[RMDB]
RNA sequence: GGGAACGACUCGAGUAGAGUCGAAAAUGCCACUAACAGGAAUAGUGUCUUUGGAGAAGUCAUUUAUUCCAGAGCUGAGCAGGAAUGCAAGAUAUCUUCUUGUGUCAGAAAGCAGGAAAGCUAUGAAAGGCCGCUGGAGACAUAUCAAAGGUUUAGAACUUGAUUGCAAAUUCGUUUGCAAUCAAGUAAAAGAAACAACAACAACAAC
Reactivity to 2A3 in 0.01 (KOAc 150mM, MgCl2 10mM, bicine 150mM(pH8.5), 24C), signal-to-noise 4, nucleotides 027 to 156: u060g010c020c010a050c050u060a090a040c050a120g000g030a030a030u040a020g040u020g020u020c030u040u050u110g100g030a160g030a070a020g010u020c000a010u110u190u160a040u030u000c000c020a010g010a020g030c070u030g010a010g030c020a010g030g040a110a030u060g000c020a010a030g030a100u110a070u070c040u040u000c000u000u030g010u030g040u000c000a010g090a090a050a010g000c020a010g000g080a080a070a030g000c030u050a040u120g070a110a050a040g040g020c020c020g030c040u040g000g010a040g000a020c020a020u080a020u090c050a050a070a110g070g020u110u190u180a050g100a040
Reactivity to DMS in 0.01 (KOAc 150mM, MgCl2 10mM, bicine 150mM(pH8.5), 24C), signal-to-noise 2, nucleotides 027 to 156: u000g040c060c010a070c070u000a100a090c070a190g000g020a060a040u000a020g020u000g020u000c030u000u000u030g020g000a220g000a200a060g000u010c010a030u010u000u000a040u010u000c010c050a180g000a220g020c070u010g000a120g030c020a140g050g010a050a040u020g050c010a030a050g000a130u010a120u000c120u000u000c000u000u010g010u010g020u000c030a130g000a110a170a130g000c040a100g010g010a110a110a060g030c030u000a080u010g030a040a070a100g020g000c000c020g020c080u000g010g000a210g000a050c020a050u020a060u020c030a080a080a150g010g000u010u020u000a090g000a110